[RMDB]
RNA sequence: GGGAACGACUCGAGUAGAGUCGAAAACAUCAUCCCUUCGGGGAUGAUGAAAGAUCGAAAGAUCAGGCUUACCGUAAUAAGCCAAAAUACGAGCGAAACGCAAAAGACCUGUGUUCGCACAGGUCAACCAUUGCGCACUGUUCGCAGUGCGCAAUGGAAAAGAAACAACAACAACAAC
Reactivity to DMS in 0.01 (KOAc 150mM, MgCl2 10mM, bicine 150mM(pH8.5), 24C), signal-to-noise 1, nucleotides 027 to 126: c000a010u010c000a000u000c000c000c000u000u020c160g000g060g000g010a000u000g000a040u000g020a010a130a130g000a000u020c000g010a130a130a200g000a010u000c000a090g000g000c000u000u000a070c080c060g000u000a100a290u000a000a080g000c000c000a060a070a070a090u000a050c110g000a060g080c000g010a060a080a130c080g010c090a110a070a130a140g010a000c000c000u000g050u000g020u000u000c230g000c000a010c000a000g030g000u010c000a020a100
Reactivity to 2A3 in 0.01 (KOAc 150mM, MgCl2 10mM, bicine 150mM(pH8.5), 24C), signal-to-noise 1, nucleotides 027 to 126: c000a000u000c010a000u000c000c020c000u000u040c190g040g010g000g000a000u000g000a000u010g010a010a010a000g000a000u040c040g010a030a070a030g010a000u020c020a010g000g000c000u030u060a030c050c070g120u020a040a050u050a110a040g000c000c000a080a020a000a000u170a060c060g000a050g060c040g060a160a190a010c130g010c080a000a080a050a040g000a000c000c010u010g000u010g000u040u050c210g040c080a000c000a000g000g030u010c010a020a010
The record gives the reactivity of an RNA of 177 nucleotides to DMS and 2A3.
The reactions ran in a buffer of 150 mM KOAc, 10 mM MgCl2 and 150 mM bicine (pH 8.5), at 24 C.
Source: RMDB library M2PK50, as collected in RNAgym.